Chemical mapping of a 177-nucleotide RNA with 2A3 and DMS. Conditions: 150 mM KOAc, 10 mM MgCl2 and 150 mM bicine (pH 8.5), 24 C. DMS (dimethyl sulfate) methylates the pairing face of unpaired adenines and cytosines. For DMS, 2,409 sequencing reads were counted. 2A3 adducts were read by reverse transcription with SuperScript II with manganese.
RNA sequence: GGGAACGACUCGAGUAGAGUCGAAAAGAAGUACUGUUCGCAGUACUUCAAACGGCAACGGCAAGGCCAAGCCGAAGGCGAACGGCAAGCCGAAGGCCAAAAAAACCGUUCCCUUCGGGGAACGGAACAUACACGUCAACUUCGGUUGACGUGUAUGAAAAGAAACAACAACAACAAC
Reactivity to 2A3 in 0.01 (KOAc 150mM, MgCl2 10mM, bicine 150mM(pH8.5), 24C), signal-to-noise 3, nucleotides 027 to 126: g000a000a000g000u000a000c000u000g010u050u120c230g000c110a000g000u000a000c000u000u010c000a010a010a020c080g000g010c010a050a020c010g000g000c030a050a240g160g010c030c010a000a030g050c020c030g110a090a060g040g000c060g030a140a120c100g020g000c030a010a010g010c000c000g010a020a050g140g000c000c010a090a030a000a000a000a000a080c000c010g000u000u010c000c000c000u010u030c170g050g000g020g010a000a000c010g000g000a000a000
Reactivity to DMS in 0.01 (KOAc 150mM, MgCl2 10mM, bicine 150mM(pH8.5), 24C), signal-to-noise 3, nucleotides 027 to 126: g010a000a010g020u000a000c000u010g010u000u010c230g040c010a020g030u010a010c000u020u000c000a060a070a130c160g020g030c030a050a300c010g010g040c000a030a190g020g020c010c000a060a260g010c010c000g000a100a090g020g050c000g000a050a120c170g000g000c020a060a150g020c000c000g020a050a080g000g000c010c050a000a010a070a090a060a040a050c000c000g000u000u000c000c000c000u000u010c130g030g000g000g000a000a000c020g000g020a020a070